[RMDB]
RNA sequence: GGGAACGACUCGAGUAGAGUCGAAAAGCAACGCAAAGCCGCGGCAAGUGGAGUUAGCGAGAAGAGACUAGGCUUUGGUUUCGUCAAGUGAAGCGGUCACCAAUCAGGUGUGGUAGUUACCGUAAAAAUAACCGCUCUUUGUUCGCAAAGAGCGGAAGGCGUCUUAAUUGUUCGCAAUUAAGACGCCAAAAGAAACAACAACAACAAC
Reactivity to 2A3 in 0.01 (KOAc 150mM, MgCl2 10mM, bicine 150mM(pH8.5), 24C), signal-to-noise 1, nucleotides 027 to 156: g010c010a090a000c030g050c090a080a130a000g030c030c030g040c090g060g010c120a140a020g040u140g130g000a060g060u060u080a040g010c030g040a040g020a050a040g070a000g010a010c020u070a030g020g040c000u060u050u070g000g070u000u010u050c000g000u020c020a080a030g040u010g060a090a000g020c000g070g040u020c010a010c010c000a040a070u060c050a040g090g050u050g010u030g080g020u030a070g000u140u060a000c000c000g000u040a010a180a000a000a000u100a100a010c000c000g010c000u000c000u000u020u010g010u070u010c060g000c120a000a000a000g000a000g000c000g000g010a000a000

This 207-nucleotide RNA was probed chemically with 2A3. Reactivities are given for positions 27 through 156.